[RMDB]
The record gives the reactivity of an RNA of 177 nucleotides to DMS and 2A3. For DMS the reverse transcriptase was MarathonRT. It was measured as part of the RMDB library TTRDES. For 2A3, 7,450 sequencing reads were counted. Values cover nucleotides 27 to 126. For DMS, 3,775 sequencing reads were counted. 2A3 is a SHAPE reagent: it acylates the 2'-hydroxyl of flexible nucleotides of all four kinds.
RNA sequence: GGGAACGACUCGAGUAGAGUCGAAAAGAUAUGGACAUUGAAGCACGAUAAGAUGGUAUCGGAAACGAUAUUCAUCUUUUGACGUGCCAAUGUCCUAAGUCAAAAGGCAAGCCUUCGGGCUUGCCAAGUUCUUACACAACUUCGGUUGUGUAAGAACAAAAGAAACAACAACAACAAC
Reactivity to DMS in 0.01 (KOAc 150mM, MgCl2 10mM, bicine 150mM(pH8.5), 24C), signal-to-noise 3, nucleotides 027 to 126: g010a010u000a110u010g010g000a030c000a000u010u000g000a220a260g010c010a010c000g020a190u010a020a010g000a030u000g000g020u000a000u000c000g020g000a020a020a030c010g020a030u000a010u010u010c010a010u000c000u000u000u000u000g020a230c030g010u000g020c010c000a000a000u000g010u000c000c000u000a010a060g000u000c020a130a120a140a150g010g010c000a000a000g000c000c000u000u000c250g040g010g000c000u000u010g000c000c000a020a020
Reactivity to 2A3 in 0.01 (KOAc 150mM, MgCl2 10mM, bicine 150mM(pH8.5), 24C), signal-to-noise 2, nucleotides 027 to 126: g020a000u010a010u050g000g000a010c010a020u000u030g080a300a050g000c000a010c020g160a240u080a300a010g000a010u000g000g010u010a000u030c020g020g020a000a020a000c020g000a000u000a010u150u190c010a000u000c010u010u010u050u090g060a020c020g000u010g000c000c000a000a000u000g000u010c010c000u000a020a000g000u000c020a030a060a080a110g030g000c010a000a000g000c000c000u160u210c300g060g030g000c000u000u000g000c000c000a000a000